[RMDB]
RNA sequence: GGGAACGACUCGAGUAGAGUCGAAAAUCUAUCACCAGCCGAUGUUUACGACACGAAUGGGCUGUUGCAAAUUACGUAUAGCUCUUGCAACAUCGUGUCGAAACGUUCCCAAGCUAUACGCCACAAAACCUGGAAAAAGUUUCGACUUUUUCCAGGUAAAAGAAACAACAACAACAAC
Reactivity to DMS in 0.01 (KOAc 150mM, MgCl2 10mM, bicine 150mM(pH8.5), 24C), signal-to-noise 3, nucleotides 027 to 126: u000c090u000a070u020c030a080c050c110a070g010c060c040g000a070u010g000u000u000u000a140c000g010a020c000a000c020g010a050a090u000g020g010g020c190u000g010u000u000g020c010a010a050a140u010u000a110c030g020u010a010u010a020g000c020u010c220u010u010g000c020a030a010c000a030u010c020g020u000g000u000c000g000a010a050a080c040g010u000u000c000c000c000a180a040g000c010u000a010u000a010c010g030c190c160a090c150a090a050a060
Reactivity to 2A3 in 0.01 (KOAc 150mM, MgCl2 10mM, bicine 150mM(pH8.5), 24C), signal-to-noise 3, nucleotides 027 to 126: u040c010u020a100u080c050a050c080c040a020g080c050c010g070a040u100g040u060u090u090a090c030g000a000c000a000c000g030a090a110u240g060g160g050c080u020g020u000u000g000c000a000a030a070u210u130a080c000g020u000a000u010a010g020c020u040c010u190u020g000c020a010a000c000a040u030c010g010u000g010u040c010g000a020a010a000c020g000u010u000c000c000c000a000a000g000c000u000a020u000a000c010g020c040c010a110c030a050a060a020
The record gives the reactivity of an RNA of 177 nucleotides to DMS and 2A3. The RNA was probed in 150 mM KOAc, 10 mM MgCl2 and 150 mM bicine (pH 8.5) at 24 C. The data come from the RNA Mapping Database (RMDB), library M2PK90. For 2A3, 2,991 sequencing reads were counted. For DMS, 1,763 sequencing reads were counted.